Description
An RNA of 177 nucleotides, treated with DMS and read out base by base. The RNA was probed in 150 mM KOAc, 10 mM MgCl2 and 150 mM bicine (pH 8.5) at 24 C. For DMS the reverse transcriptase was MarathonRT. The data come from the RNA Mapping Database (RMDB), library TTRDES.
[RMDB]
RNA sequence: GGGAACGACUCGAGUAGAGUCGAAAAAGAUAUGGAGACGACAAAGAGCAACAGCGUAUGGCAAGUCCACACUCGGAAACGAGUGUGGUCACCCAUACGACAUGCUCAAAAACGUCUCCUAAGUCAACCUAAAGCCAAUCUUCGGAUUGGCUUUAGGAAAAGAAACAACAACAACAAC
Reactivity to DMS in 0.01 (KOAc 150mM, MgCl2 10mM, bicine 150mM(pH8.5), 24C), signal-to-noise 1, nucleotides 027 to 126: a130g050a000u000a300u010g000g000a010g020a000c000g000a190c160a060a180a100g000a050g000c010a020a180c220a130g000c040g000u000a010u000g000g020c150a140a090g030u000c000c000a000c030a000c000u020c030g030g000a100a030a110c030g020a010g020u000g000u000g000g030u000c030a080c300c000c000a000u020a000c000g000a030c060a250u000g000c000u000c000a000a050a030a140a060c010g020u000c000u000c070c020u000a000a100g020u020c010a110a100